Chemical mapping of a 177-nucleotide RNA with DMS and 2A3. The 2A3 profile rests on 11,651 reads. For DMS, 22,962 sequencing reads were counted. The reactions ran in a buffer of 150 mM KOAc, 10 mM MgCl2 and 150 mM bicine (pH 8.5), at 24 C. Source: RMDB library OK2TRN, as collected in RNAgym.

[RMDB]
RNA sequence: GGGAACGACUCGAGUAGAGUCGAAAAGGCUCACUGUCUGCAUAUGGAGAUGAUAGUAACUGAAUCCAUAGUUAUCAAGUGGUGGCAUUUUAGAACACAAAGGGACAGCAGAUGCCAUCUCUGUCAAGAGGACUAUAAAAUUCGUUUUAUAGUCCUCAAAAGAAACAACAACAACAAC
Reactivity to DMS in 0.01 (KOAc 150mM, MgCl2 10mM, bicine 150mM(pH8.5), 24C), signal-to-noise 9, nucleotides 027 to 126: g010g010c010u000c050a180c040u000g000u000c020u010g010c120a160u000a040u000g010g010a050g010a110u010g010a110u000a110g010u010a100a070c060u000g010a170a160u000c020c030a030u000a050g010u010u000a090u010c150a090a100g010u000g000g020u000g000g010c040a060u000u000u000u010a120g010a110a070c090a060c100a060a070a150g010g000g010a050c040a040g010c100a070g010a030u010g010c020c020a060u000c010u000c010u010g010u000c140a090a130
Reactivity to 2A3 in 0.01 (KOAc 150mM, MgCl2 10mM, bicine 150mM(pH8.5), 24C), signal-to-noise 7, nucleotides 027 to 126: g030g000c000u020c020a020c030u030g010u060c020u070g040c030a080u020a030u110g040g020a080g010a030u110g040a040u090a120g170u120a140a050c040u040g060a040a050u000c000c010a020u010a030g070u080u100a140u230c100a160a060g040u040g110g010u030g060g000c020a030u040u060u050u160a100g080a160a020c040a000c040a130a160a080g100g020g010a010c000a010g050c040a040g040a040u130g010c000c000a020u020c010u000c010u020g160u070c000a040a050
Values cover nucleotides 27 to 126.